Description:
Structure probing data (DMS and 2A3) for a 177-nucleotide construct. The data come from the RNA Mapping Database (RMDB), library RFMREP. For 2A3 the reverse transcriptase was SuperScript II with manganese. For 2A3, 26,796 sequencing reads were counted. For DMS, 18,387 sequencing reads were counted. For DMS the reverse transcriptase was MarathonRT.
RNA sequence: GGGAACGACUCGAGUAGAGUCGAAAAUUAUCGGUGUCAGCUCAUUGCACACAACAAUGUCCACAUUCUUGCGAUUUCAUACGUCACUGGAAUGUUCCAUAAGUGUGCGAAAUCAGCGUGUGAAUAGGAAACUAUACAUGUUCGCAUGUAUAGUUUCAAAAGAAACAACAACAACAAC
Reactivity to DMS in 0.01 (KOAc 150mM, MgCl2 10mM, bicine 150mM(pH8.5), 24C), signal-to-noise 9, nucleotides 027 to 126: u010u010a070u010c060g010g010u000g010u000c050a110g010c030u000c100a140u000u000g000c010a020c010a010c020a070a150c210a090a030u000g000u010c060c070a030c010a010u000u000c010u000u000g010c070g000a020u000u000u000c300a080u010a090c300g010u000c010a030c030u000g000g000a020a020u000g000u000u000c150c010a020u000a090a140g010u000g020u000g010c020g010a030a050a090u010c130a030g020c030g020u000g010u000g000a080a100u010a110g010
Reactivity to 2A3 in 0.01 (KOAc 150mM, MgCl2 10mM, bicine 150mM(pH8.5), 24C), signal-to-noise 9, nucleotides 027 to 126: u150u080a080u110c040g050g010u050g070u070c030a020g000c010u020c040a050u040u090g000c000a000c010a000c000a020a130c040a080a060u040g030u050c050c020a010c000a020u000u010c000u010u020g010c010g030a030u020u050u100c100a090u110a170c070g010u010c020a000c030u000g000g010a030a010u040g020u040u030c020c000a020u020a100a070g000u010g000u010g010c010g010a030a020a020u070c030a020g030c040g050u080g010u030g120a080a060u070a120g160